[RMDB]
RNA sequence: GGGAACGACUCGAGUAGAGUCGAAAAGAGAUUUUCGAAUCUCCUAAAUCCUAAGUCAUGCACGAAGCGUCGAAGAACGCAAGGGAGUCGGAAACGACUCCUGAUGACCGGGAGACGUCAAGUGCAUGAUAUGGACGGUUGCCUUCUUCGGAAGGAACGGUACGUAUGUAUUCGUACAUACGUACCGAAAAGAAACAACAACAACAAC
Reactivity to 2A3 in 0.01 (KOAc 150mM, MgCl2 10mM, bicine 150mM(pH8.5), 24C), signal-to-noise 4, nucleotides 027 to 156: g010a010g000a010u070u070u110u240c280g100a030a010u000c000u030c000c000u080a110a080a090u030c000c010u030a120a000g010u010c000a000u000g000c000a010c060g130a260a030g000c010g000u000c000g010a100a070g010a100a020c030g010c040a100a120g020g000g000a000g000u010c030g030g030a120a100a070c010g000a000c000u000c000c010u000g000a020u070g010a010c000c080g010g000g010a040g000a000c010g010u070c070a130a020g000u000g000c000a000u000g000a000u000a010u030g020g000a020c100g140g000u110u190g030c010c000u000u000c010u030u090c260g130g020a010a010g000g000a060a050
Reactivity to DMS in 0.01 (KOAc 150mM, MgCl2 10mM, bicine 150mM(pH8.5), 24C), signal-to-noise 3, nucleotides 027 to 156: g010a030g010a020u000u000u000u020c180g020a050a030u000c000u000c000c040u000a080a100a070u000c010c000u000a070a260g010u000c000a020u010g000c040a030c050g010a270a220g020c000g010u010c010g000a150a140g000a090a150c030g010c020a060a300g000g000g010a030g020u000c010g010g000a160a130a250c020g010a040c000u000c000c000u000g000a060u010g000a130c140c020g010g020g020a300g010a040c020g030u000c010a030a300g000u010g000c000a010u000g000a000u000a130u010g000g020a020c050g010g000u010u000g010c000c010u000u000c010u000u010c270g010g010a050a030g000g020a090a060
An RNA of 207 nucleotides, treated with 2A3 and DMS and read out base by base. For DMS, 6,348 sequencing reads were counted. The reactions ran in a buffer of 150 mM KOAc, 10 mM MgCl2 and 150 mM bicine (pH 8.5), at 24 C. For DMS the reverse transcriptase was MarathonRT. The 2A3 profile rests on 4,645 reads.